[RMDB]
RNA sequence: GGGAACGACUCGAGUAGAGUCGAAAACACUGGCACCCCAGCCAUGAUUGGUGCCCCAGCCACAUCUCUGCUGUGAGCCCCAGAGCCCUGGUUAAUUAAUCAUCCACGUGUUGAUGGGGAGAGGCCCAUUCACAAAAGCGACAUAAAGCCCAGGGAGAUUCUAUCUCCUGUUCGCAGGAGAUAGAAUAAAAGAAACAACAACAACAAC
Reactivity to 2A3 in 0.01 (KOAc 150mM, MgCl2 10mM, bicine 150mM(pH8.5), 24C), signal-to-noise 3, nucleotides 027 to 156: c050a000c070u040g000g000c000a090c000c050c000c020a000g010c020c030a040u120g060a110u030u070g000g030u070g010c010c030c010c020a020g020c040c020a120c020a220u050c050u020c050u150g010c010u010g020u040g080a070g030c050c000c010c020a030g020a070g110c030c000c000u000g040g020u030u110a120a070u130u070a070a040u140c040a020u040c020c020a080c120g000u040g010u040u190g040a040u000g000g000g050g010a110g060a030g070g070c010c000c000a020u060u060c030a010c020a020a170a030a040g040c050g080a080c020a110u170a080a050a000g010c000c010c010a000g020g030g000a010g030
Reactivity to DMS in 0.01 (KOAc 150mM, MgCl2 10mM, bicine 150mM(pH8.5), 24C), signal-to-noise 2, nucleotides 027 to 156: c040a120c040u020g010g050c060a090c000c010c010c050a300g040c050c050a040u020g000a100u010u020g010g000u000g090c020c030c010c090a120g020c000c080a070c060a090u010c040u000c030u000g020c030u000g000u020g000a130g000c020c050c010c000a240g010a180g020c000c010c040u000g000g000u000u010a080a130u010u000a070a160u000c050a110u000c020c020a080c100g010u010g010u020u000g030a060u000g020g010g020g000a150g000a130g020g040c020c000c000a060u010u020c050a130c050a050a050a050a120g000c020g010a150c060a130u010a080a110a260g000c230c010c010a030g000g000g000a090g020